[RMDB]
RNA sequence: GGGAACGACUCGAGUAGAGUCGAAAAGUAGGCCAUGUCCAGCGCGGGCGCGUCUUGAGCCACGACGAGCUGGGUGCCCACGCCGAAGCCGUCGAUCGGACAGCGGGCAGCCAAAAGCGCGGCGAUGGCAGCAACUCGAAUUCGUUCGAGUUGCUGCAAAAGAAACAACAACAACAAC
Reactivity to 2A3 in 0.01 (KOAc 150mM, MgCl2 10mM, bicine 150mM(pH8.5), 24C), signal-to-noise 2, nucleotides 027 to 126: g100u090a070g080g000c000c050a070u090g010u000c040c030a060g000c010g010c030g050g060g000c040g000c050g040u010c020u110u240g080a030g010c030c000a060c030g050a000c010g020a040g020c010u020g010g000g030u050g000c030c020c000a050c040g000c010c010g020a060a030g000c030c030g050u100c050g060a180u140c060g000g030a060c030a040g050c070g020g030g000c000a010g100c010c000a060a250a000a040g020c040g000c010g000g000c020g040a090u110g080
Reactivity to DMS in 0.01 (KOAc 150mM, MgCl2 10mM, bicine 150mM(pH8.5), 24C), signal-to-noise 3, nucleotides 027 to 126: g020u000a120g000g000c020c030a040u020g000u000c010c020a150g010c020g010c010g010g000g020c010g000c120g010u020c070u000u000g000a300g020c050c010a080c090g010a030c020g000a060g040c020u000g000g000g020u000g000c040c050c060a060c060g030c010c010g000a100a110g000c000c020g000u000c060g000a080u010c100g000g010a080c050a090g040c070g000g010g010c000a100g020c010c010a020a040a100a110g020c030g020c050g000g010c060g000a060u000g010